[RMDB]
RNA sequence: GGGAACGACUCGAGUAGAGUCGAAAAGAUAUGGAUCAUUUCCAGUGUAACGAUAAGAAACAUUCGGAAACGAAUGAAUUUCUUUUGACGUAUUGAUCCUAAGUCGACGCGCGAGUUCGCUCGCGAACCUGGAGAAUUGCUUCGGCAAUUCUCCAGGAAAAGAAACAACAACAACAAC
Reactivity to 2A3 in 0.01 (KOAc 150mM, MgCl2 10mM, bicine 150mM(pH8.5), 24C), signal-to-noise 1, nucleotides 027 to 126: g000a000u020a010u090g000g000a000u010c000a010u120u300u040c160c070a040g030u090g140u200a100a230c300g050a220u250a300a010g000a020a010a000c000a040u000u000c010g020g000a020a000a000c010g010a000a000u000g040a120a220u030u030u000c020u000u050u040u290g020a030c070g040u020a020u050u040g000a000u000c010c000u000a060a000g050u040c040g050a040c070g000c000g000c030g090a000g010u100u160c230g010c170u040c000g010c020g070a020a020